[RMDB]
RNA sequence: GGGAACGACUCGAGUAGAGUCGAAAAACACAACCGACCCAGGAGACGCUAGCGUGUGCCCAGGGAAGAGUUCUCUUUUCUUUUUAACAAGCAUAUCCUACCUUGGAAACGGAUUAUCCGGCGAUAAGUUUACUAAGUUCUUCGGAACUUAGUAAACAAAAGAAACAACAACAACAAC
Reactivity to DMS in 0.01 (KOAc 150mM, MgCl2 10mM, bicine 150mM(pH8.5), 24C), signal-to-noise 3, nucleotides 027 to 126: a070c080a110c140a070a100c030c030g000a150c060c000c010a100g020g000a100g020a070c100g010c060u000a040g010c100g040u000g040u000g010c050c020c090a110g000g000g010a030a060g000a070g000u000u000c100u000c010u000u000u010u000c010u000u000u000u040u000a050a080c170a050a110g020c030a050u000a080u000c050c020u000a090c090c030u010u000g020g030a060a070a160c040g010g010a160u020u000a120u010c040c000g000g030c080g010a080u010a080a160
Reactivity to 2A3 in 0.01 (KOAc 150mM, MgCl2 10mM, bicine 150mM(pH8.5), 24C), signal-to-noise 2, nucleotides 027 to 126: a000c040a010c040a020a070c030c010g060a060c010c000c020a030g000g030a080g050a010c010g000c120u050a020g010c010g060u040g010u040g060c000c000c030a010g000g010g040a050a030g000a010g050u130u030c050u010c000u120u060u040u020c000u120u120u040u020u120a070a060c100a060a010g000c010a030u010a030u130c000c010u040a140c020c020u010u050g030g000a040a100a030c010g010g000a010u080u060a090u170c020c030g040g000c010g030a030u030a200a030
This 177-nucleotide RNA was probed chemically with DMS and 2A3. It was measured as part of the RMDB library RFMREP. The reactions ran in a buffer of 150 mM KOAc, 10 mM MgCl2 and 150 mM bicine (pH 8.5), at 24 C. DMS adducts were read by reverse transcription with MarathonRT. The DMS profile rests on 1,825 reads.